[RMDB]
RNA sequence: GGGAACGACUCGAGUAGAGUCGAAAACGGUCAGGAUUUCGUCCCUUACCUGCCAGCCGUCAUGCCUCCUCUUCUGUCCGUUGCGGCUGCCAAGGCCGACAUCCAGCUGUUGGAUGAUGAGGACCAGUCUCUAGAGAGGCUUCGGCCUCUCUAGAGAAAAAGAAACAACAACAACAAC
Reactivity to DMS in 0.01 (KOAc 150mM, MgCl2 10mM, bicine 150mM(pH8.5), 24C), signal-to-noise 2, nucleotides 027 to 126: c090g010g010u010c040a050g020g010a180u010u000u000c120g030u010c000c020c010u010u000a070c060c020u000g010c140c020a210g020c060c020g020u010c070a030u010g030c050c020u000c020c010u000c050u000u010c050u010g030u000c020c020g020u000u010g000c000g010g000c000u010g010c190c130a120a150g030g060c010c020g050a170c020a030u000c000c000a020g060c240u010g010u020u000g010g010a030u000g000a100u010g010a120g020g010a040c050c050a100g010
Structure probing data (DMS) for a 177-nucleotide construct. Conditions: 150 mM KOAc, 10 mM MgCl2 and 150 mM bicine (pH 8.5), 24 C. For DMS, 1,525 sequencing reads were counted. Reactivities are rounded to 0.1 and cut off at 0 and 3.